[RMDB]
RNA sequence: GGGAACGACUCGAGUAGAGUCGAAAACAACUGGAUCUAACAACCUCCUUUGUGAAAGUUAAGGGGAUUCAAGCUUGGCUGCAAUCUUCCAGGAAACAUUGGGCGCUUGAAUGGAGAAGACCUGCAGUCAGUUCGUAGUUUUCGAACUACGAACUGAAAAAGAAACAACAACAACAAC
Reactivity to 2A3 in 0.01 (KOAc 150mM, MgCl2 10mM, bicine 150mM(pH8.5), 24C), signal-to-noise 1, nucleotides 027 to 126: c050a000a030c070u020g020g090a070u020c000u090a040a100c070a050a050c000c000u030c030c000u030u120u070g210u070g100a250a080a050g000u050u080a040a090g000g020g000g040a010u080u030c100a000a100g040c060u080u150g130g000c000u020g040c010a000a100u000c010u080u000c000c050a020g000g100a030a020a000c030a060u060u090g120g050g000c040g030c010u060u060g060a060a050u040g050g020a110g050a080a040g040a040c000c030u090g000c010a020g000
Reactivity to DMS in 0.01 (KOAc 150mM, MgCl2 10mM, bicine 150mM(pH8.5), 24C), signal-to-noise 2, nucleotides 027 to 126: c090a040a190c110u000g000g010a030u010c020u000a080a120c080a060a100c030c030u010c060c020u010u000u000g020u010g010a080a090a100g000u000u010a080a070g000g030g000g000a080u000u000c040a050a110g000c100u000u000g010g000c040u000g000c030a040a110u000c020u000u000c010c050a080g000g000a230a060a090c090a070u000u010g000g020g010c050g020c040u000u010g030a060a080u010g030g010a160g000a080a040g000a040c120c100u000g020c070a050g020